[RMDB]
RNA sequence: GGGAACGACUCGAGUAGAGUCGAAAACGGUCACGCUCUUCUUGGACCGGUUGAGGUUUCGUACCCCGACCUGGCCGCCAAGGGCGAACCAAUUCCGCGGAUUCUGUCGAAGCAGGGAUGUAUGAUGCGUUAAUGUAAUGUUCGCAUUACAUUAACGAAAAGAAACAACAACAACAAC
Reactivity to 2A3 in 0.01 (KOAc 150mM, MgCl2 10mM, bicine 150mM(pH8.5), 24C), signal-to-noise 9, nucleotides 027 to 126: c060g000g010u050c090a060c260g000c010u020c010u110u040c030u090u160g060g020a210c040c000g000g010u000u010g060a060g010g020u040u050u220c210g030u160a060c010c010c000c000g000a010c000c030u100g020g000c030c030g010c030c020a010a010g010g000g000c000g000a000a000c000c000a010a030u050u010c010c010g070c040g100g000a080u110u040c020u080g060u070c070g060a100a030g020c030a030g040g020g040a040u060g070u100a110u140g130a080u150g050
Reactivity to DMS in 0.01 (KOAc 150mM, MgCl2 10mM, bicine 150mM(pH8.5), 24C), signal-to-noise 9, nucleotides 027 to 126: c150g010g010u000c090a100c020g020c010u000c010u000u010c120u000u010g010g010a130c010c070g000g010u000u000g010a110g000g010u000u020u040c210g010u040a040c010c000c020c000g000a010c010c000u030g030g000c020c030g000c080c180a020a010g010g000g000c010g000a280a010c010c010a130a150u000u010c010c010g010c050g000g010a070u010u010c040u000g000u000c050g000a100a130g010c040a050g000g010g000a050u010g000u030a060u020g010a090u020g000